[RMDB]
RNA sequence: GGGAACGACUCGAGUAGAGUCGAAAACAUUACGAAUUCAGUCGCAAAUUGUAGAAUUAGCUACUCUCCGAUUUAGUGAGCGUUAGUAACGUUGUAAUAUAAUAUAGUCUUUGGAAGGAUUAUAUUGGAGCCGCGGACAAGUUCGCUUGUCCGCGAACACAAUAUGCCGGUUCGCCGGCAUAUUGUGAAAAGAAACAACAACAACAAC
Reactivity to 2A3 in 0.01 (KOAc 150mM, MgCl2 10mM, bicine 150mM(pH8.5), 24C), signal-to-noise 2, nucleotides 027 to 156: c000a040u120u210a050c030g010a040a120u100u130c060a050g050u030c000g000c080a010a040a060u040u040g020u030a070g020a140a060u150u020a060g040c020u060a050c010u010c000u040c050c000g050a080u040u090u140a110g000u060g070a020g060c020g010u070u090a070g030u050a050a030c100g000u000u020g020u050a110a120u080a160u020a070a050u000a010u000a020g000u010c050u140u040u210g120g080a030a080g000g000a000u000u000a000u000a000u000u000g030g010a050g070c110c000g000c010g000g000a000c000a010a000g030u040u120c150g020c180u000u040g020u000c030c000g000c000g000a000a000